[RMDB]
RNA sequence: GGGAACGACUCGAGUAGAGUCGAAAACGUAACGAACUGAACGAAGCGGCGGAAACGCUGGCUAACUUUUUAAAAGAUGACGCCAAUAUUCACGCCAUUCAGCGCGCGGCGGUCCUGUUAGCAGACAGUAACCGAAACCGUUCGCGGUUUCGGUUACAAAAGAAACAACAACAACAAC
Reactivity to 2A3 in 0.01 (KOAc 150mM, MgCl2 10mM, bicine 150mM(pH8.5), 24C), signal-to-noise 1, nucleotides 027 to 126: c020g020u010a010a000c000g000a020a020c000u020g020a020a000c110g060a190a020g080c070g040g000c010g000g040a020a070a020c160g040c050u010g000g010c000u000a020a020c010u020u130u060u080u200a250a280a090a300g200a300u200g020a020c000g010c000c000a010a020u070a080u120u070c080a090c240g000c000c010a040u100u080c000a020g000c000g000c040g000c040g040g000c000g010g010u000c000c000u010g050u070u020a020g000c070a030g030a010c020a030
Reactivity to DMS in 0.01 (KOAc 150mM, MgCl2 10mM, bicine 150mM(pH8.5), 24C), signal-to-noise 1, nucleotides 027 to 126: c060g000u010a080a040c030g000a100a080c040u000g010a030a050c150g000a130a100g010c120g010g020c020g010g010a030a050a070c250g010c100u000g010g010c020u000a230a020c020u000u010u000u020u020a040a120a050a060g010a090u010g000a120c210g000c000c000a000a050u010a110u000u000c040a130c010g000c020c000a100u010u010c060a050g040c300g000c000g020c130g000g040c000g000g000u000c110c030u010g020u000u000a090g050c150a160g030a080c090a040

Overview:
This 177-nucleotide RNA was probed chemically with 2A3 and DMS. Reactivities are given for positions 27 through 126. For DMS the reverse transcriptase was MarathonRT. For 2A3, 720 sequencing reads were counted.